[RMDB]
RNA sequence: GGGAACGACUCGAGUAGAGUCGAAAACAGUGCGGUGCUUAUUGAGGUGGAUGGCUAUGCGUAUCACAAUGCCGAAAAUCGUGAGACUUUUCGUUUAGAUCGCUGGAAGGCUAACGACGCCACCCUGUCGGAGUAGUGGUUUCGACCACUACUCCGAAAAAGAAACAACAACAACAAC
Reactivity to 2A3 in 0.01 (KOAc 150mM, MgCl2 10mM, bicine 150mM(pH8.5), 24C), signal-to-noise 2, nucleotides 027 to 126: c040a030g040u070g100c040g030g040u040g010c070u200u130a150u120u220g060a130g030g010u030g030g010a070u090g020g000c000u040a000u110g000c010g000u060a000u020c000a010c080a220a080u130g030c040c020g040a020a000a000a020u070c060g020u030g080a080g000a060c000u000u050u010u000c030g010u010u010u140a050g000a080u050c010g000c030u020g080g040a040a040g000g000c020u010a070a010c100g070a020c060g050c030c000a050c000c000c000u040g040
Reactivity to DMS in 0.01 (KOAc 150mM, MgCl2 10mM, bicine 150mM(pH8.5), 24C), signal-to-noise 2, nucleotides 027 to 126: c080a080g010u000g010c040g010g020u000g010c030u020u010a140u000u000g000a140g020g010u010g000g000a050u000g010g000c020u000a020u000g010c010g010u010a070u010c040a080c190a090a050u000g000c150c020g030a020a050a030a050u000c010g010u000g000a210g020a010c300u000u000u000u000c050g010u000u000u010a130g010a040u000c070g020c030u000g010g020a120a120g010g000c000u010a090a130c130g020a120c120g000c010c010a070c040c000c030u000g010